[RMDB]
RNA sequence: GGGAACGACUCGAGUAGAGUCGAAAAUUGUACUAAGUAGUAACUUAGAUGAUAACACUAAGCGUGCUAUAUUGGCAAUGCCGAUCAUGUCUUCUGUGUUGAAGUCGAUAUGAAGAUAGUUGGGAGGGAUAUUUUGAGUGUUCGCACUCAAAAUAUCAAAAGAAACAACAACAACAAC
Reactivity to DMS in 0.01 (KOAc 150mM, MgCl2 10mM, bicine 150mM(pH8.5), 24C), signal-to-noise 5, nucleotides 027 to 126: u000u010g010u000a100c010u000a040a120g030u010a030g000u010a270a100c010u000u000a010g010a140u010g010a210u010a110a110c120a090c010u000a010a020g020c040g020u010g000c040u000a040u000a210u000u000g010g010c010a020a050u000g010c010c010g010a170u000c010a060u000g000u000c010u000u000c040u010g020u010g020u000u010g010a090a090g010u000c070g010a040u000a030u010g000a050a110g030a050u000a040g010u000u000g000g000g010a130g000g010
Reactivity to 2A3 in 0.01 (KOAc 150mM, MgCl2 10mM, bicine 150mM(pH8.5), 24C), signal-to-noise 3, nucleotides 027 to 126: u000u000g020u070a300c020u030a120a050g010u020a000g030u000a050a010c010u010u000a020g050a100u140g060a090u150a300a060c040a000c030u000a000a010g040c050g140u060g000c060u010a020u050a090u130u060g000g010c010a010a060u070g050c000c010g000a040u030c010a020u060g050u000c000u020u000c020u040g130u040g090u180u120g120a130a050g060u050c040g000a010u020a030u120g010a020a040g040a070u110a070g090u100u050g060g000g040a040g040g060